[RMDB]
Structure probing data (DMS and 2A3) for a 207-nucleotide construct. The reactions ran in a buffer of 150 mM KOAc, 10 mM MgCl2 and 150 mM bicine (pH 8.5), at 24 C. For DMS the reverse transcriptase was MarathonRT.

RNA sequence: GGGAACGACUCGAGUAGAGUCGAAAAGGUUUGAUUCGUCAAACCAAAAAAGAUAUGGACUUCGUCGUGAGGGAGGGUUAAGUGUCGGAAACGACACUCCACCCGAAGAACUCACGAGCGAAGUCCUAAGUCAAAAACCCGAACUUCGGUUCGGGAACAACGCAAUUAGGUUCGCCUAAUUGCGUUGAAAAGAAACAACAACAACAAC
Reactivity to DMS in 0.01 (KOAc 150mM, MgCl2 10mM, bicine 150mM(pH8.5), 24C), signal-to-noise 1, nucleotides 027 to 156: g010g020u000u000u020g010a020u000u020c300g020u010c010a000a000a020c020c010a010a080a090a070a120a080g000a100u000a200u010g000g010a020c010u000u000c000g000u000c020g000u000g020a060g010g000g010a150g040g040g050u000u000a000a010g000u010g010u000c020g020g000a140a120a300c000g000a000c000a010c000u000c000c090a000c000c000c000g020a090a090g010a180a210c010u010c000a020c040g000a000g010c040g000a010a020g010u000c000c000u010a000a080g010u000c040a040a060a050a070a160c020c000c010g030a000a010c010u000u000c300g070g000u000u040c000g000g000g010a000a010
Reactivity to 2A3 in 0.01 (KOAc 150mM, MgCl2 10mM, bicine 150mM(pH8.5), 24C), signal-to-noise 2, nucleotides 027 to 156: g030g010u010u000u020g030a070u080u070c150g040u070c130a000a000a070c020c060a180a000a000a000a040a020g060a040u070a050u070g020g000a000c000u000u000c000g030u000c000g000u010g000a010g000g050g010a020g000g010g020u000u000a010a010g000u000g020u010c000g000g030a050a040a060c040g000a000c000a000c000u000c010c020a000c010c010c000g000a040a010g000a000a000c000u000c000a000c000g020a010g020c000g000a000a000g000u000c000c000u000a000a000g000u000c030a000a020a060a140a190c000c020c030g000a000a000c000u100u080c240g140g010u010u000c010g000g020g000a000a020